This 207-nucleotide RNA was probed chemically with DMS and 2A3.
[RMDB]
RNA sequence: GGGAACGACUCGAGUAGAGUCGAAAACGCAAACGACGAACAAUACGCUUUAGCAGCUUAAUAACCUGCAUUUAGCCUUCGCGCUCCAGCUUCCGCUCGUAAGACGGGGAUAACGCGGAGUCAAACCAAAACGAGAUCGUGUGGAAGCCACCGUUUGGCUUUUAUUCUACUUCGGUAGAAUAAAAGCAAAAGAAACAACAACAACAAC
Reactivity to DMS in 0.01 (KOAc 150mM, MgCl2 10mM, bicine 150mM(pH8.5), 24C), signal-to-noise 1, nucleotides 027 to 156: c040g010c050a030a070a090c010g020a070c030g000a070a100c050a110a090u000a100c060g030c030u000u000u000a180g030c030a020g000c020u000u000a100a130u000a200a090c300c000u000g020c030a130u000u000u000a040g020c020c000u000u010c020g000c010g000c030u000c030c050a150g010c020u000u010c000c030g040c060u000c120g020u000a040a150g010a070c030g000g000g000g000a070u000a020a110c060g030c000g000g000a080g030u000c050a080a000a110c050c120a040a070a050a140c030g000a080g020a050u000c050g010u000g000u000g000g000a100a130g020c050c010a020c040c010g000u000u000u000g020
Reactivity to 2A3 in 0.01 (KOAc 150mM, MgCl2 10mM, bicine 150mM(pH8.5), 24C), signal-to-noise 5, nucleotides 027 to 156: c060g010c060a070a110a030c080g160a020c030g040a150a010c050a120a050u200a140c090g010c010u040u030u030a010g010c000a000g000c000u040u040a020a020u040a030a050c010c000u040g030c080a240u040u060u050a010g000c000c000u020u010c010g000c000g000c030u020c010c010a030g020c010u050u020c010c020g080c070u050c020g050u070a050a050g050a060c040g030g000g000g000a020u040a120a050c040g000c010g040g000a000g030u050c030a060a010a120c040c060a050a050a020a020c020g000a020g000a100u110c030g010u030g010u030g140g000a060a020g020c020c000a020c020c020g020u000u040u090g050

The DMS profile rests on 2,476 reads.